[RMDB]
RNA sequence: GGGAACGACUCGAGUAGAGUCGAAAAGAUGAGAAUACGUGACUUGGUCAGAGGCGGAAAGCCACAAGCACGAACGAUGCAGUAGAGUAUCGAACCGCCAACAGAUGCACGUUGUGAUCGUGCUAGAGAUUACUCCGCUAUUCGUAGCGGAGUAAUCAAAAGAAACAACAACAACAAC
Reactivity to 2A3 in 0.01 (KOAc 150mM, MgCl2 10mM, bicine 150mM(pH8.5), 24C), signal-to-noise 4, nucleotides 027 to 126: g060a080u240g010a020g010a050a130u090a070c010g030u030g170a160c020u030u020g050g020u090c130a000g040a070g210g000c000g060g120a220a100a030g010c000c030a040c020a010a000g030c010a000c010g010a070a000c020g010a010u020g000c000a010g100u300a070g070a000g160u010a020u040c010g020a050a020c040c000g050c030c020a070a050c050a080g060a070u090g000c000a000c040g020u110u030g160u070g070a120u180c050g010u010g010c000u030a050g070a000
Reactivity to DMS in 0.01 (KOAc 150mM, MgCl2 10mM, bicine 150mM(pH8.5), 24C), signal-to-noise 4, nucleotides 027 to 126: g000a090u030g000a080g010a110a050u010a070c050g010u000g000a090c010u000u010g020g010u020c130a100g010a150g000g000c020g000g000a090a080a070g010c020c020a120c150a040a120g010c020a080c040g010a100a090c040g010a060u000g010c050a170g050u030a070g000a120g000u000a050u000c000g000a120a180c040c020g000c030c020a070a100c230a040g010a040u030g020c000a040c070g000u000u010g000u010g010a090u020c070g000u000g000c000u000a010g000a300

Source: RMDB library OK1LIB, as collected in RNAgym.
An RNA of 177 nucleotides, treated with 2A3 and DMS and read out base by base.
For DMS, 7,624 sequencing reads were counted.
Values cover nucleotides 27 to 126.
The 2A3 profile rests on 1,587 reads.